[RMDB]
RNA sequence: GGGAACGACUCGAGUAGAGUCGAAAAGAAGAGCAGGCAGAUAAUCUUGUGCAGUAUGCAUGCUCCUAGCUCCACAAGAAGCAAGGCAGCAAAAGAAUAACUGCCACUGCACAAGUGGAGCCGCAGAGCUCAUCAUGCUGUUCGCAGCAUGAUGAGCAAAAGAAACAACAACAACAAC
Reactivity to DMS in 0.01 (KOAc 150mM, MgCl2 10mM, bicine 150mM(pH8.5), 24C), signal-to-noise 2, nucleotides 027 to 126: g000a090a060g000a070g000c000a040g000g050c000a000g000a300u050a070a080u020c120u000u000g000u040g010c000a000g020u010a210u000g000c150a020u000g030c000u020c000c000u000a110g030c040u010c000c120a110c170a070a080g000a070a080g000c000a060a040g000g000c090a000g010c050a070a090a140a130g000a070a280u020a130a140c110u000g000c010c250a120c140u020g050c000a000c020a020a070g000u000g000g010a140g000c010c010g000c220a060g000a050
Reactivity to 2A3 in 0.01 (KOAc 150mM, MgCl2 10mM, bicine 150mM(pH8.5), 24C), signal-to-noise 3, nucleotides 027 to 126: g140a000a000g010a000g010c050a080g030g000c000a000g020a110u180a160a120u120c010u040u060g040u020g040c000a020g010u050a020u180g010c010a030u030g000c000u000c000c000u010a020g030c000u020c030c020a100c040a120a030g070a050a000g000c050a010a030g040g030c060a020g050c040a020a020a020a010g220a000a110u170a150a050c030u010g010c000c020a030c010u000g000c000a000c000a030a010g020u020g040g080a010g000c000c020g040c040a040g000a000

Conditions: 150 mM KOAc, 10 mM MgCl2 and 150 mM bicine (pH 8.5), 24 C. The record gives the reactivity of an RNA of 177 nucleotides to DMS and 2A3. The 2A3 profile rests on 2,189 reads. In probing experiments dimethyl sulfate is read out at A N1 and C N3, which are open when not base-paired. For 2A3 the reverse transcriptase was SuperScript II with manganese. Values cover nucleotides 27 to 126.